[RMDB]
RNA sequence: GGGAACGACUCGAGUAGAGUCGAAAAAGCGAUGCCUCAAGGAGCCCCAGCACAAUGGCUACUGUCUCUUUCAUCAGAAGCAGAUUCCUGUUUCAAAGGCGCAUACAGUUCCAAAUCCGGCUCCUCAACAAGUCACAUGGGGUUGUGCGCCCGUAAGCUGGGCUUAAGGAUUCGUCCUUAAGCCCAGAAAAGAAACAACAACAACAAC
Reactivity to 2A3 in 0.01 (KOAc 150mM, MgCl2 10mM, bicine 150mM(pH8.5), 24C), signal-to-noise 1, nucleotides 027 to 156: a000g040c000g000a020u060g030c000c000u050c080a010a020g030g000a060g030c000c000c000c050a020g030c050a010c010a080a070u020g020g000c010u050a020c020u020g070u000c010u030c000u110u130u040c050a160u030c010a060g020a050a000g000c000a000g000a020u050u110c040c000u000g020u000u040u030c050a080a060a180g010g010c030g000c030a000u060a110c050a020g000u070u000c040c000a030a050a080u030c050c000g040g000c040u030c020c050u080c020a040a140c040a070a030g090u080c000a020c000a080u020g000g000g020g000u030u040g000u000g000c000g000c050c020c010g090u090a090a000g050

An RNA of 207 nucleotides, treated with 2A3 and read out base by base. High 2A3 reactivity points to a flexible backbone, as in loops and unpaired stretches. The reactions ran in a buffer of 150 mM KOAc, 10 mM MgCl2 and 150 mM bicine (pH 8.5), at 24 C. The 2A3 profile rests on 830 reads.